Chemical mapping of a 177-nucleotide RNA with 2A3 and DMS. Conditions: 150 mM KOAc, 10 mM MgCl2 and 150 mM bicine (pH 8.5), 24 C.
RNA sequence: GGGAACGACUCGAGUAGAGUCGAAAACUUGCGUGAGGCGAUUCAACGUCUCGAAGCGAAGGGCUUGUUGCUUCGUCGCCAGGGUGGCGGCACUUUUGUCCAGAGCAGCCUAUGGCAAAGCUUCAGCCCCUAUUGUACGUUUCGACGUACAAUAGGGAAAAGAAACAACAACAACAAC
Reactivity to 2A3 in 0.01 (KOAc 150mM, MgCl2 10mM, bicine 150mM(pH8.5), 24C), signal-to-noise 5, nucleotides 027 to 126: c000u030u140g020c010g060u160g020a010g010g000c020g050a070u190u130c180a180a110c020g010u010c010u000c020g010a080a010g020c030g030a070a060g040g000g000c040u120u220g050u050u070g030c010u040u060c050g150u050c030g030c040c030a070g120g100g020u090g050g020c000g000g080c020a020c020u160u240u180u220g030u010c030c020a030g020a030g090c020a010g010c020c000u160a300u100g020g000c060a000a020a030g010c000u000u020c010a010g020c010
Reactivity to DMS in 0.01 (KOAc 150mM, MgCl2 10mM, bicine 150mM(pH8.5), 24C), signal-to-noise 5, nucleotides 027 to 126: c030u000u000g040c040g020u010g010a020g030g010c000g000a140u000u010c300a120a140c010g000u000c010u000c000g010a070a250g010c020g010a080a090g010g000g000c040u010u010g000u000u000g010c020u000u000c160g020u010c180g000c000c020a060g020g010g010u000g020g020c030g010g020c040a040c090u000u000u000u010g000u010c060c080a110g010a130g020c030a110g000c010c020u000a080u010g010g030c020a100a050a060g000c030u000u000c020a070g000c050